[RMDB]
RNA sequence: GGGAACGACUCGAGUAGAGUCGAAAAAACCCUAGCACUCCAGCCUACACUUUUACAACAGUGAAACCUGGCGCAGCAUUUAGUGUGUUAGCAUGCUAUAAUGGUCGUCCGACUGGUACAUUCACUGAUACUACAUCGUUCGCGAUGUAGAAAAGAAACAACAACAACAAC
Reactivity to 2A3 in 0.01 (KOAc 150mM, MgCl2 10mM, bicine 150mM(pH8.5), 24C), signal-to-noise 9, nucleotides 027 to 129: a000a000c010c000c000u010a020g010c020a010c030u010c020c010a030g020c010c020u110a050c050a060c070u080u100u110u190a130c090a190a010c000a030g000u000g000a030a020a030c000c000u020g010g000c000g000c040a040g020c000a010u000u000u010a020g000u010g000u000g040u080u070a100g180c010a010u010g000c000u040a030u080a220a020u030g110g090u090c010g030u020c020c030g080a110c140u090g000g010u080a060c040a120u010u010c000a010c000u010g010a020u030a060
Reactivity to DMS in 0.01 (KOAc 150mM, MgCl2 10mM, bicine 150mM(pH8.5), 24C), signal-to-noise 9, nucleotides 027 to 129: a080a060c000c000c000u000a000g040c070a070c040u030c030c040a000g020c060c040u010a090c110a070c070u020u020u030u060a100c200a120a110c010a000g000u010g050a000a030a060c060c000u010g040g010c030g000c180a050g030c020a010u000u000u000a000g000u030g050u000g000u000u030a140g010c000a000u000g000c010u020a010u080a070a030u030g000g050u000c030g000u070c050c070g040a090c120u040g000g000u050a080c190a300u010u010c010a020c000u000g020a100u000a170